[RMDB]
RNA sequence: GGGAACGACUCGAGUAGAGUCGAAAAUGCAUCGUCGGUCAGAGUCAUGCCGGCGACUGCGGCGUGCGCCGCCUGCCGAUGGAGGUCCGCGGGAAUGUUGCGGGCGACGGCGAUGGCGCCCCGCAACAAUGCGGAAUCUGUUCGCAGAUUCCGCAUUAAAAGAAACAACAACAACAAC
Reactivity to 2A3 in 0.01 (KOAc 150mM, MgCl2 10mM, bicine 150mM(pH8.5), 24C), signal-to-noise 2, nucleotides 027 to 126: u100g030c020a000u020c020g030u010c000g020g030u180c080a070g100a080g300u170c100a120u230g070c000c030g000g000c030g000a010c020u040g000c000g000g000c300g060u220g030c010g000c040c030g050c050c070u130g000c000c030g120a090u150g120g200a130g140g170u000c010c000g000c020g030g060g160a240a290u300g130u200u300g110c020g010g000g080c020g050a030c000g030g020c020g020a050u030g000g010c010g030c000c040c030c000g000c000a000a090c030
Reactivity to DMS in 0.01 (KOAc 150mM, MgCl2 10mM, bicine 150mM(pH8.5), 24C), signal-to-noise 2, nucleotides 027 to 126: u010g010c080a200u000c000g040u000c020g000g020u000c120a090g030a240g010u000c230a110u000g000c010c010g000g020c010g010a010c270u020g000c010g040g010c220g000u020g010c050g030c040c000g050c070c050u010g030c000c030g000a150u010g020g000a150g030g010u000c010c010g010c000g020g010g020a180a110u030g010u010u010g010c030g020g000g000c040g010a110c010g010g020c030g000a050u010g010g010c000g000c010c020c020c010g000c020a030a050c120